An RNA of 307 nucleotides, treated with 2A3 and read out base by base.
For 2A3, 1,686 sequencing reads were counted.
The data come from the RNA Mapping Database (RMDB), library POS240.
Conditions: 150 mM KOAc, 10 mM MgCl2 and 150 mM bicine (pH 8.5), 24 C.

RNA sequence: GGGAACGACUCGAGUAGAGUCGAAAAGCUGUUGCUUCGGCAACAGCAACACUUGCUACGGCAAGUGACGUAAGUCUACGGACUUACGAAGCCUGGACGUGAGUCCAGGCACGCGUUCCGGUGACGGAACGCGACGCCGUGGCUUCGGCCACGGCGCUGUGCGUUUCCAUUUGAGUAUCCUGAAAACGGGCUUUUCAGCAUGGAACGUACAUAUUAAAUAGUAGGAGUGCAUAGUGGCCCGUAUAGCAGGCAUUAACAUUCCUGAUAGAUGCUCGUUCGCGAGCAUCAAAAGAAACAACAACAACAAC
Reactivity to 2A3 in 0.01 (KOAc 150mM, MgCl2 10mM, bicine 150mM(pH8.5), 24C), signal-to-noise 1, nucleotides 027 to 266: g000c000u000g000u000u000g000c000u040u090c240g100g000c010a000a000c000a000g000c000a000a000c000a000c000u010u000g010c020u010a040c300g210g000c020a000a020g010u010g020a010c010g000u000a000a000g000u000c000u000a010c300g170g000a000c000u010u000a000c000g000a090a020g000c000c000u000g010g000a010c000g030u110g080a030g000u000c000c000a010g000g000c000a030c000g020c000g000u010u040c000c010g000g040u060g040a040c010g000g020a000a010c000g000c000g000a040c060g020c000c000g070u000g020g150c000u060u090c300g130g020c000c020a000c010g000g030c040g000c030u020g000u010g000c000g000u010u180u000c010c020a030u020u050u050g000a000g010u140a080u060c000c000u010g000a010a030a080a140c100g070g010g000c020u140u230u020u060c030a070g040c020a000u010g000g010a000a000c010g020u010a010c000a000u080a010u010u170a040a050a050u140a030g220u090a040g020g010a020g000u010g040c050a070u090a100g080u040g080g070c030c100c030g080u190a150u250a200g070c080a030g000g010c000a000u000u100a050a010c000a000u000u040c010c020u010g000a010u050a090